An RNA of 207 nucleotides, treated with DMS and 2A3 and read out base by base. In probing experiments dimethyl sulfate is read out at A N1 and C N3, which are open when not base-paired. The RNA was probed in 150 mM KOAc, 10 mM MgCl2 and 150 mM bicine (pH 8.5) at 24 C. The 2A3 profile rests on 2,517 reads.

[RMDB]
RNA sequence: GGGAACGACUCGAGUAGAGUCGAAAACUCACUCACUACGGUGAGUGAGAAUGCUUAAGCCUCAAUAAAGCUUGGCUUGAGUGCCUCAAGCAGAUAUAGACUGAAACAUUUAGUAUAGCCAAGCAGGGAGCAACGGCUCGAGUACGCUCGAGCCGAACAUCCUAGCAUAGUUCGCUAUGCUAGGAUGAAAAGAAACAACAACAACAAC
Reactivity to DMS in 0.01 (KOAc 150mM, MgCl2 10mM, bicine 150mM(pH8.5), 24C), signal-to-noise 2, nucleotides 027 to 156: c010u000c000a050c000u000c010a010c000u010a120c300g050g010u020g010a030g000u040g010a000g000a040a070u000g030c020u010u000a100a100g050c000c000u000c080a100a130u020a120a110a200g010c000u000u010g010g000c010u010u000g010a080g040u010g020c010c000u010c100a180a080g010c000a130g000a230u000a090u030a130g020a150c060u000g020a110a070a080c040a040u000u010u010a130g030u000a130u010a040g010c000c030a030a030g100c000a120g010g000g010a130g050c060a090a140c020g010g000c010u000c000g010a030g000u000a090c300g000c030u000c030g030a050g000c000c010g000a000a090
Reactivity to 2A3 in 0.01 (KOAc 150mM, MgCl2 10mM, bicine 150mM(pH8.5), 24C), signal-to-noise 4, nucleotides 027 to 156: c000u000c000a000c000u000c000a000c000u010a010c210g090g010u000g000a000g010u000g000a000g000a010a030u050g000c000u010u020a030a040g010c000c000u020c020a040a100u130a180a140a020g010c010u000u000g000g000c000u010u030g010a010g000u110g040c010c000u050c060a040a020g000c020a000g120a060u130a050u110a130g130a100c040u080g080a090a100a010c050a040u090u110u100a070g020u070a060u150a110g020c000c000a000a000g010c030a020g020g040g030a070g060c060a070a100c010g000g010c000u000c000g000a000g020u040a030c230g030c080u000c000g000a000g000c010c000g010a000a000